[RMDB]
RNA sequence: GGGAACGACUCGAGUAGAGUCGAAAACUCACAAAGUCAUCAGUUCGUGGAUAUUUCUUUAUAGGGAAAUUUGAAAUUACAAAUUCAGGUUCUCCAGCGCACGCAUGCGUGUGACUUCUCCGGUGAAGGUUGUCGUGCGCGCACCUGGCCGUGACUCGUAUAGUCUAGGUUUCGACCUAGACUAUACAAAAGAAACAACAACAACAAC
Reactivity to DMS in 0.01 (KOAc 150mM, MgCl2 10mM, bicine 150mM(pH8.5), 24C), signal-to-noise 1, nucleotides 027 to 156: c020u000c030a210c080a130a120a040g020u000c010a100u010c040a040g010u000u000c080g070u080g020g100a270u000a020u010u000u010c020u000u020u000a130u010a140g000g000g020a020a050a050u000u010u010g000a060a030a130u000u000a270c100a130a110a210u000u000c010a060g020g010u010u000c010u000c000c000a160g000c010g050c000a000c000g030c050a090u000g040c060g030u010g030u000g000a060c020u020u000c020u000c050c090g000g050u010g010a050a110g010g010u000u000g000u000c030g060u000g010c060g000c030g020c020a050c020c010u000g010g060c070c040g000u020g010a090c070u020c140
Reactivity to 2A3 in 0.01 (KOAc 150mM, MgCl2 10mM, bicine 150mM(pH8.5), 24C), signal-to-noise 3, nucleotides 027 to 156: c010u040c020a060c040a050a170a010g050u020c010a130u030c020a050g050u140u080c050g050u100g030g000a060u020a100u130u170u050c040u060u210u160a300u300a190g070g020g030a070a060a060u110u080u080g050a050a100a040u200u130a160c080a070a140a060u040u040c010a010g000g050u060u050c070u020c110c040a030g010c000g000c030a000c010g040c020a030u090g040c080g120u150g090u090g070a040c000u050u030c050u090c070c070g100g020u120g080a070a030g010g020u060u080g070u110c040g020u030g020c030g000c010g000c030a040c000c000u020g030g000c010c020g050u060g010a040c030u060c120
An RNA of 207 nucleotides, treated with DMS and 2A3 and read out base by base. DMS adducts were read by reverse transcription with MarathonRT. Values cover nucleotides 27 to 156. The DMS profile rests on 1,864 reads. For 2A3 the reverse transcriptase was SuperScript II with manganese. It was measured as part of the RMDB library OK3TST. For 2A3, 1,531 sequencing reads were counted.